[RMDB]
RNA sequence: GGGAACGACUCGAGUAGAGUCGAAAACUUCGUUAUGAAGCAAAUUCCCGAUAGGAUUCACUUAAUUGUGAAGAUGCCUUGUAACCGCAACUACAAAACUACUACUAGAGUUUCGACUAGAAUAUGGCUUUGUUGCUACCUUCGGGUAGCAACAAAGAAAAGAAACAACAACAACAAC
Reactivity to 2A3 in 0.01 (KOAc 150mM, MgCl2 10mM, bicine 150mM(pH8.5), 24C), signal-to-noise 4, nucleotides 027 to 126: c000u020u000c000g110u220u240a200u300g010a000a030g000c130a000a000a140u020u030c020c000c000g010a050u030a040g090g000a010u080u000c000a000c060u130u190a140a160u300u140g030u000g000a000a040g080a050u110g120c030c070u070u000g140u110a050a030c030c020g080c090a000a050c050u070a080c060a000a020a140a050c030u210a070c010u080a000c010u020a030g070a000g110u000u060u030c060g050a010c010u010a040g060a050a090u140a130u250g100g000
Reactivity to DMS in 0.01 (KOAc 150mM, MgCl2 10mM, bicine 150mM(pH8.5), 24C), signal-to-noise 1, nucleotides 027 to 126: c000u000u000c000g010u000u110a000u120g000a020a000g020c160a040a090a110u010u000c010c000c000g000a030u040a040g000g000a080u000u030c000a000c000u000u000a120a130u010u000g020u030g000a070a040g000a110u010g030c040c020u000u000g000u010a140a100c050c040g010c110a110a060c060u010a040c030a030a070a050a030c130u000a040c050u010a030c100u030a060g000a040g030u000u000u000c010g000a040c100u030a070g000a070a060u070a070u000g010g010

Description: An RNA of 177 nucleotides, treated with 2A3 and DMS and read out base by base. It was measured as part of the RMDB library RFM100. The RNA was probed in 150 mM KOAc, 10 mM MgCl2 and 150 mM bicine (pH 8.5) at 24 C.